[RMDB]
RNA sequence: GGGAACGACUCGAGUAGAGUCGAAAACGUGCGCAUAUAGAACAUCCUGAUGUCUCUGGUGUUUGUAAAUAUAAGGGUAAGUUUGUCCAAAUCCCUGCUCAGUGUGUCCGUGACCCUGUGGGAUUUUAUACGUUUAGCUUCGGCUAAACGAAAAGAAACAACAACAACAAC
Reactivity to DMS in 0.01 (KOAc 150mM, MgCl2 10mM, bicine 150mM(pH8.5), 24C), signal-to-noise 9, nucleotides 027 to 129: c010g000u070g000c030g000c050a040u030a070u000a090g000a070a050c010a070u000c040c040u000g000a080u040g030u040c080u000c080u020g000g020u010g000u000u000u000g040u010a030a050a050u050a060u030a070a050g010g000g010u010a040a080g000u010u020u020g000u050c090c080a060a080a080u000c020c010c010u030g010c080u010c080a050g000u020g010u000g000u050c060c070g000u000g000a120c010c000c010u000g000u030g020g010g020a160u000u010u010u020a090u020a210
Reactivity to 2A3 in 0.01 (KOAc 150mM, MgCl2 10mM, bicine 150mM(pH8.5), 24C), signal-to-noise 9, nucleotides 027 to 129: c010g010u040g000c010g010c040a010u080a000u030a100g080a040a000c000a050u080c010c050u050g050a070u150g140u030c040u000c020u190g010g010u020g020u030u040u030g030u050a040a110a030u190a060u070a070a070g030g010g000u030a040a040g050u050u160u180g130u060c030c010a010a060a030u020c000c000c000u030g040c040u020c040a050g020u010g020u040g020u100c040c040g040u040g050a090c010c000c000u030g040u090g020g020g000a010u040u030u050u000a170u050a050
Chemical mapping of a 170-nucleotide RNA with DMS and 2A3.
Values are in units of 0.01, from 0 to 300, in steps of 10.
2A3 adducts were read by reverse transcription with SuperScript II with manganese.
The data come from the RNA Mapping Database (RMDB), library 15KLIB.
The reactions ran in a buffer of 150 mM KOAc, 10 mM MgCl2 and 150 mM bicine (pH 8.5), at 24 C.